RNA sequence: GGGAACGACUCGAGUAGAGUCGAAAAUGCUUAUGACGCCGGAAAUCCAGCAGGCGGCUGUGGUAGCCGCACCGCUCAUGAAGGGGCGUGGUGACCGGGUGGGCGCGCGCAUGGCGUUCAUUGCCGCGCAUCUCGGACAGUUCGCUGUCCGAGAUGCAAAAGAAACAACAACAACAAC
Reactivity to 2A3 in 0.01 (KOAc 150mM, MgCl2 10mM, bicine 150mM(pH8.5), 24C), signal-to-noise 1, nucleotides 027 to 126: u040g000c000u030u200a090u180g080a100c090g010c060c000g000g010a090a150a160u020c030c030a020g040c000a040g070g040c000g000g000c010u040g060u220g180g280u280a000g000c020c010g040c000a000c010c020g000c020u020c000a100u270g190a090a080g060g020g010g000c000g000u010g040g000u020g040a050c000c030g000g100g000u110g070g000g000c030g000c000g000c000g030c040a060u070g090g000c000g030u060u040c040a100u070u200g030c000c000g020c000
Reactivity to DMS in 0.01 (KOAc 150mM, MgCl2 10mM, bicine 150mM(pH8.5), 24C), signal-to-noise 1, nucleotides 027 to 126: u000g000c060u000u010a060u010g010a090c070g000c010c030g000g000a060a100a090u000c040c090a020g030c070a100g000g020c000g000g010c040u000g040u000g010g000u030a070g030c000c000g000c060a080c070c030g020c030u000c050a080u010g020a150a190g020g000g000g000c000g000u000g010g030u000g000a150c040c030g000g010g000u010g000g010g010c050g020c060g020c140g000c050a070u000g020g010c110g000u020u000c050a070u020u020g010c000c000g020c150
Conditions: 150 mM KOAc, 10 mM MgCl2 and 150 mM bicine (pH 8.5), 24 C. An RNA of 177 nucleotides, treated with 2A3 and DMS and read out base by base. For 2A3, 1,219 sequencing reads were counted. Reactivities are given for positions 27 through 126. For DMS, 1,797 sequencing reads were counted. 2A3 adducts were read by reverse transcription with SuperScript II with manganese. It was measured as part of the RMDB library OK2TST. DMS adducts were read by reverse transcription with MarathonRT.